Chemical mapping of a 177-nucleotide RNA with 2A3 and DMS. It was measured as part of the RMDB libraries RFM100 and RFMREP.

RNA sequence: GGGAACGACUCGAGUAGAGUCGAAAAGAGGAGGAUAGUGAUCGAAUAGAUCGGCGGAUGCUAUCCCGGAUGUGGCUCAUUCGUUAGCUUAUUAAGUAAAACAUUAGGGUGACUUAAUGGACAAAGUCGUAUUCGACGUAUUCGUACGUCGAAUACGAAAAGAAACAACAACAACAAC
Reactivity to 2A3 in 0.01 (KOAc 150mM, MgCl2 10mM, bicine 150mM(pH8.5), 24C), signal-to-noise 4, nucleotides 027 to 126: g110a000g070g050a040g000g030a020u010a010g070u110g050a040u000c020g000a050a090u070a150g070a050u030c010g000g040c060g060g020a020u110g030c000u000a000u040c020c000c000g000g020a010u030g030u090g050g020c050u030c090a050u040u020c040g060u090u070a010g000c010u020u020a050u070u120a090a030g050u060a060a020a070a050c030a030u040u100a000g030g050g000u060g020a010c020u010u010a030a010u040g000g020a030c040a060a090a000g050u030
Reactivity to DMS in 0.01 (KOAc 150mM, MgCl2 10mM, bicine 150mM(pH8.5), 24C), signal-to-noise 2, nucleotides 027 to 126: g000a080g020g040a170g000g000a070u000a040g010u000g000a010u000c000g000a120a080u090a170g010a030u000c010g020g020c100g000g000a060u000g000c010u010a020u000c000c000c000g000g020a010u010g020u050g000g040c040u040c020a070u000u000c070g000u030u040a050g000c040u000u030a050u040u060a000a170g000u030a070a050a100a010c050a120u030u000a000g010g000g000u020g000a100c000u030u010a020a010u000g000g000a200c130a020a130a040g000u010

Reactivities are given for positions 27 through 126. Conditions: 150 mM KOAc, 10 mM MgCl2 and 150 mM bicine (pH 8.5), 24 C. For 2A3 the reverse transcriptase was SuperScript II with manganese.